[RMDB]
RNA sequence: GGGAACGACUCGAGUAGAGUCGAAAAAUACGGAACCCACUGAAAAUAUGCUUGUGGCUGUAGACCAUUAUGCAGGGCAACUAUUAUCACUAGAUAUCCCCACUUCUGAACUUACACUAAAAGAAGCCCCAUUACACGCGUUCGCGCGUGUAAUGGGAAAAGAAACAACAACAACAAC
Reactivity to 2A3 in 0.01 (KOAc 150mM, MgCl2 10mM, bicine 150mM(pH8.5), 24C), signal-to-noise 2, nucleotides 027 to 126: a000u210a020c050g000g040a030a080c010c000c000a020c020u050g130a000a130a020a030u110a110u080g060c030u070u010g020u030g050g020c060u030g000u100a010g030a210c030c000a000u260u160a050u170g000c000a000g000g040g000c000a030a000c080u030a050u090u060a070u160c050a010c020u110a030g000a070u060a020u120c000c000c000c000a030c000u100u100c030u000g000a000a080c010u050u040a080c050a110c100u190a240a010a110a000g090a050a000g010c010